[RMDB]
Structure probing data (2A3 and DMS) for a 207-nucleotide construct.
The reactions ran in a buffer of 150 mM KOAc, 10 mM MgCl2 and 150 mM bicine (pH 8.5), at 24 C.
It was measured as part of the RMDB library OK3TST.
For DMS the reverse transcriptase was MarathonRT.
For 2A3, 20,641 sequencing reads were counted.
RNA sequence: GGGAACGACUCGAGUAGAGUCGAAAAUGGUGCAUUAUGGUGAUAUAGUAAUGAGUGCCUGCACAAGUGCUUGCACAGGUGCUUGCACAGGUGCUUGCACAAGUGCUUGCACAAGUGCUUGCACAAGUGCCUGCACAAGUGCUUGUACACAUUACUGCAAAAGGACUAUAUUCGUAUAGUCCUUUUGAAAAGAAACAACAACAACAAC
Reactivity to 2A3 in 0.01 (KOAc 150mM, MgCl2 10mM, bicine 150mM(pH8.5), 24C), signal-to-noise 2, nucleotides 027 to 156: u110g030g000u060g020c060a060u070u100a080u220g040g030u070g070a090u070a040u090a190g000u010a000a000u010g020a020g060u000g010c000c010u010g000c000a010c010a040a120g000u000g000c000u010u010g000c000a010c010a020g160g000u000g000c000u010u010g010c000a000c000a010g160g000u000g000c000u000u020g000c020a020c030a100a050g140u050g020c000u000u010g000c000a000c000a050a030g000u000g000c000u000u010g000c000a000c000a020a020g000u000g000c000c000u000g000c000a000c000a040a020g000u000g000c000u000u000g000u010a000c040a000c000a010u000u010a000c000u010g000
Reactivity to DMS in 0.01 (KOAc 150mM, MgCl2 10mM, bicine 150mM(pH8.5), 24C), signal-to-noise 5, nucleotides 027 to 156: u000g010g000u000g020c030a100u000u000a080u000g020g010u000g030a120u000a100u000a050g010u000a020a030u000g000a110g040u000g010c010c040u000g030c020a020c010a050a290g020u000g020c010u000u000g010c020a030c020a080g000g030u000g010c000u000u000g010c020a020c010a070g010g020u000g010c000u000u000g010c030a080c040a080a090g030u000g000c040u000u000g020c020a030c020a020a060g020u000g010c000u000u000g010c030a030c010a020a060g030u000g010c000c010u000g030c030a020c020a020a240g020u000g000c000u000u010g010u000a020c000a210c030a030u000u000a020c020u000g000